About this RNA
Chemical mapping of a 207-nucleotide RNA with DMS and 2A3. As a SHAPE reagent, 2A3 marks flexible, mostly unpaired nucleotides at the ribose 2'-OH. Values cover nucleotides 27 to 156.
[RMDB]
RNA sequence: GGGAACGACUCGAGUAGAGUCGAAAACUCUUGUUAGGUGAAAGUUGAUGGUCGCCGUGUCAGUCCAUGCCUUUGAAAACAGUUCUAUGUAGUAGGGAGUCGAGAACCUAUGAGAGUUAUAACUUGCUAUGCCUUGGACUCUUCGGAGUCCAAGGAACCGCUAUUUCAGUUUCGACUGAAAUAGCGGAAAAGAAACAACAACAACAAC
Reactivity to DMS in 0.01 (KOAc 150mM, MgCl2 10mM, bicine 150mM(pH8.5), 24C), signal-to-noise 1, nucleotides 027 to 156: c020u000c020u000u000g020u000u000a060g000g020u000g030a080a100a150g000u020u020g020a150u000g000g030u000c020g010c000c040g000u010g000u000c050a140g000u040c020c020a130u000g000c010c010u000u000u010g020a110a070a060a070c040a040g050u010u000c040u000a100u000g020u000a100g040u000a100g000g020g000a120g040u000c010g010a170g040a150a120c010c000u010a030u040g010a070g030a080g000u000u000a060u000a080a070c080u010u010g000c040u000a140u000g040c000c000u010u000g000g000a020c000u000c020u040u000c300g050g010a040g000u000c000c020a000a000g010g000a050a030
Reactivity to 2A3 in 0.01 (KOAc 150mM, MgCl2 10mM, bicine 150mM(pH8.5), 24C), signal-to-noise 2, nucleotides 027 to 156: c000u020c020u020u040g070u090u040a050g030g010u050g060a140a080a080g060u100u090g020a050u050g000g030u040c020g000c050c010g030u020g040u070c020a010g020u000c060c000a020u090g030c000c020u070u090u140g120a100a090a020a020c080a030g000u040u090c080u120a090u140g060u110a110g000u020a040g030g000g030a060g010u030c020g010a000g020a140a010c000c020u000a010u050g000a010g010a000g020u040u010a060u010a040a040c020u060u100g050c060u120a050u200g040c010c000u010u000g020g000a000c000u000c000u010u010c100g070g010a000g000u000c000c000a000a000g000g000a000a000